[RMDB]
RNA sequence: GGGAACGACUCGAGUAGAGUCGAAAAGAAUAGUUCGCUAUUCGCAACUCCUAAGUCACCACGUUGAUCGAAGCUGGAGCUCUUGGGUCGGAAACGACCUUUUGAGCGUUGAAAGCUUCGGGAGUGGUGAUAUGGAUAGUCCGCCAUUCGUGGCGAAUUUAUCCCACUUAUUCGUAAGUGGGAUAAAAAAAGAAACAACAACAACAAC
Reactivity to 2A3 in 0.01 (KOAc 150mM, MgCl2 10mM, bicine 150mM(pH8.5), 24C), signal-to-noise 4, nucleotides 027 to 156: g010a000a020u020a000g040u060u080c260g000c150u020a010u020u010c010g000c050a030a090c100u040c000c000u020a070a000g010u020c000a000c000c000a020c020g150u260u030g020a020u020c000g000a010a000g000c000u020g020g050a000g020c000u030c010u070u240g000g000g010u000c000g000g020a010a040a020c000g010a070c040c080u070u060u070u160g000a000g000c000g000u050u010g000a000a000a000g010c000u000u000c000g000g010g000a020g000u000g000g010u000g000a000u000a000u020g010g000a000u020a040g070u090c070c040g000c010c010a050u080u070c260g150u090g000g000c010g020a020a030
Reactivity to DMS in 0.01 (KOAc 150mM, MgCl2 10mM, bicine 150mM(pH8.5), 24C), signal-to-noise 3, nucleotides 027 to 156: g010a050a060u000a010g000u000u000c220g050c010u010a020u000u000c010g010c060a070a090c050u000c010c000u000a090a250g010u030c000a030c010c000a020c000g010u000u010g010a080u000c010g000a030a050g020c020u000g000g010a300g030c000u000c010u000u010g010g010g030u000c000g010g010a140a090a180c000g010a030c000c000u000u000u010u020g010a020g040c000g030u000u000g010a130a210a180g020c010u000u000c010g000g000g000a050g070u000g010g030u000g000a000u000a040u010g020g000a090u000a100g000u000c020c020g040c000c000a110u000u000c270g010u000g010g020c000g000a010a020

This 207-nucleotide RNA was probed chemically with 2A3 and DMS.
The data come from the RNA Mapping Database (RMDB), library RNAMAK.
The DMS profile rests on 7,661 reads.
As a SHAPE reagent, 2A3 marks flexible, mostly unpaired nucleotides at the ribose 2'-OH.